The record gives the reactivity of an RNA of 207 nucleotides to DMS. The reactions ran in a buffer of 150 mM KOAc, 10 mM MgCl2 and 150 mM bicine (pH 8.5), at 24 C. Source: RMDB library M2RFPK, as collected in RNAgym. Reactivities are given for positions 27 through 156. For DMS, 1,490 sequencing reads were counted.
[RMDB]
RNA sequence: GGGAACGACUCGAGUAGAGUCGAAAACACAAUUCUCUAAGCGAUGAGAAGCGUGUGGAAAAUUAGGGAAGGGCUACGGCUAUAAUCCUAAGAAAGCUUAUCUACAAGCGGAGGUAUUCUCAGAACAAAAACCAUUUGGCGUUCGCGCCAAAUGGAAUCAUAUCCAGCUGUUCGCAGCUGGAUAUGAAAAAGAAACAACAACAACAAC
Reactivity to DMS in 0.01 (KOAc 150mM, MgCl2 10mM, bicine 150mM(pH8.5), 24C), signal-to-noise 1, nucleotides 027 to 156: c000a040c000a010a300u010u000c020u000c000u000a190a120g000c210g020a220u010g000a020g000a010a140g010c280g090u000g030u010g010g000a070a060a090a300u000u000a030g010g040g010a060a180g000g010g020c000u010a040c150g090g000c000u000a080u000a040a120u010c020c020u000a050a040g020a070a060a170g000c070u000u000a030u000c080u000a100c060a020a060g000c040g020g010a060g000g040u000a100u000u010c070u000c040a110g000a080a030c130a060a040a090a090a200c000c000a020u020u010u010g020g000c000g060u000u000c300g000c010g020c000c000a000a000a000u000g020g000a000a020